Chemical mapping of a 177-nucleotide RNA with 2A3 and DMS. Reactivities are given for positions 27 through 126. DMS adducts were read by reverse transcription with MarathonRT. DMS (dimethyl sulfate) methylates the pairing face of unpaired adenines and cytosines. Source: RMDB library OK2TRN, as collected in RNAgym. For 2A3 the reverse transcriptase was SuperScript II with manganese. High 2A3 reactivity points to a flexible backbone, as in loops and unpaired stretches.
RNA sequence: GGGAACGACUCGAGUAGAGUCGAAAAGCGUUAGCCAGGUCGAUACCGGCGUGCAGUACACCCCAUCGAUAACCGAAACUCGACGUGAAGAUGCCCUUCGUCGGCAUGACAUACAGCGGGCGCUGUAUAACUGUCAGCUGUUCGCAGCUGACAGUUAAAAAGAAACAACAACAACAAC
Reactivity to 2A3 in 0.01 (KOAc 150mM, MgCl2 10mM, bicine 150mM(pH8.5), 24C), signal-to-noise 4, nucleotides 027 to 126: g010c020g020u050u070a020g000c040c040a140g050g000u070c070g070a050u070a220c010c030g000g020c030g010u050g020c030a030g060u090a020c030a050c030c030c000c020a040u060c040g090a070u080a140a070c060c050g050a060a060a060c030u030c050g040a030c030g030u050g040a030a050g090a060u090g020c010c010c000u120u090c040g060u020c020g040g010c050a040u070g030a020c020a030u080a010c010a010g010c060g110g150g000c140g000c020u000g020u030a060
Reactivity to DMS in 0.01 (KOAc 150mM, MgCl2 10mM, bicine 150mM(pH8.5), 24C), signal-to-noise 7, nucleotides 027 to 126: g020c040g020u000u010a130g020c020c030a140g020g000u000c180g020a100u010a100c070c040g010g020c060g010u000g010c050a090g000u020a230c130a150c050c010c020c040a080u010c050g000a070u010a090a100c100c070g000a090a090a090c080u000c020g000a030c050g010u020g010a120a110g000a080u000g010c010c040c070u010u000c150g000u000c160g000g000c040a030u010g000a060c100a110u000a030c070a040g020c000g010g030g010c120g010c010u000g010u010a060